Chemical mapping of a 177-nucleotide RNA with DMS and 2A3. The RNA was probed in 150 mM KOAc, 10 mM MgCl2 and 150 mM bicine (pH 8.5) at 24 C. It was measured as part of the RMDB libraries RFM100 and RFMREP.
RNA sequence: GGGAACGACUCGAGUAGAGUCGAAAAGGGCAACUGGACUGAAUGCAAUAGUGAUCAAUACUUCAACUGUCGGCGGGACAUCUCCCCCAAGUGAAACGCCGAUCAAGGUACCGAAGGACCGCGUGCCCUACCUUUACAAGUUCGCUUGUAAAGGUAGAAAAGAAACAACAACAACAAC
Reactivity to DMS in 0.01 (KOAc 150mM, MgCl2 10mM, bicine 150mM(pH8.5), 24C), signal-to-noise 9, nucleotides 027 to 126: g010g000g010c020a050a060c060u000g010g010a130c070u010g000a080a070u000g010c080a110a090u020a080g010u010g010a070u020c090a080a100u030a090c050u000u000c050a090a090c070u000g010u000c010g000g000c020g000g000g010a300c020a020u020c060u010c040c010c010c010c010a100a130g010u010g000a020a200a200c020g010c010c010g000a010u010c120a060a050g000g020u020a060c140c090g000a060a050g010g000a110c030c030g010c110g010u010g000c010c040
Reactivity to 2A3 in 0.01 (KOAc 150mM, MgCl2 10mM, bicine 150mM(pH8.5), 24C), signal-to-noise 9, nucleotides 027 to 126: g010g000g010c020a080a040c060u080g020g050a020c020u040g080a100a070u090g020c040a040a140u060a140g110u070g050a070u080c050a060a070u060a160c040u080u070c040a110a050c040u050g010u030c010g000g000c000g000g010g010a020c010a050u040c120u120c040c000c000c000c010a040a010g010u010g020a040a010a010c000g000c000c010g020a020u050c030a030a030g050g000u040a060c020c050g040a040a020g030g010a010c010c020g030c040g030u030g000c000c000